[RMDB]
The record gives the reactivity of an RNA of 177 nucleotides to 2A3 and DMS. DMS adducts were read by reverse transcription with MarathonRT. The reactions ran in a buffer of 150 mM KOAc, 10 mM MgCl2 and 150 mM bicine (pH 8.5), at 24 C. The data come from the RNA Mapping Database (RMDB), libraries RFM100 and RFMREP. 2A3 adducts were read by reverse transcription with SuperScript II with manganese.

RNA sequence: GGGAACGACUCGAGUAGAGUCGAAAACAUAAUCAAACAUUUGCGCAUUCUUUGACCAAGAAUAGUCAGCAAAUUGUAUUUUCAAUCAAUGCAGACCAUUUGUUUCAGAUUCGGAGAUUUUUUGCUGAAGGUUCAUAUAAUUCGUUAUAUGAACCUUAAAAGAAACAACAACAACAAC
Reactivity to 2A3 in 0.01 (KOAc 150mM, MgCl2 10mM, bicine 150mM(pH8.5), 24C), signal-to-noise 9, nucleotides 027 to 126: c030a050u270a140a080u170c070a020a050a040c030a050u030u030u070g040c070g000c010a010u030u000c010u010u030u170g070a070c020c030a020a000g010a020a010u100a080g100u160c070a020g010c000a000a090a030u040u060g070u040a120u040u090u070u090c030a020a020u020c010a030a040u070g050c030a010g040a080c030c010a060u050u030u110g050u010u060u060c060a030g010a050u080u070c060g080g010a050g030a110u060u060u040u050u120u180g050c030u050g020
Reactivity to DMS in 0.01 (KOAc 150mM, MgCl2 10mM, bicine 150mM(pH8.5), 24C), signal-to-noise 8, nucleotides 027 to 126: c080a090u020a070a070u020c090a100a080a070c100a050u000u000u010g020c110g020c070a070u000u000c010u000u000u010g010a160c300c140a070a040g000a030a020u000a080g010u000c030a060g020c010a010a020a010u000u000g010u000a040u010u010u020u020c030a040a040u010c060a080a040u010g000c060a050g000a090c070c110a060u000u010u010g020u010u000u010c110a090g010a070u010u010c120g010g010a070g000a020u000u000u010u010u010u000g010c070u010g010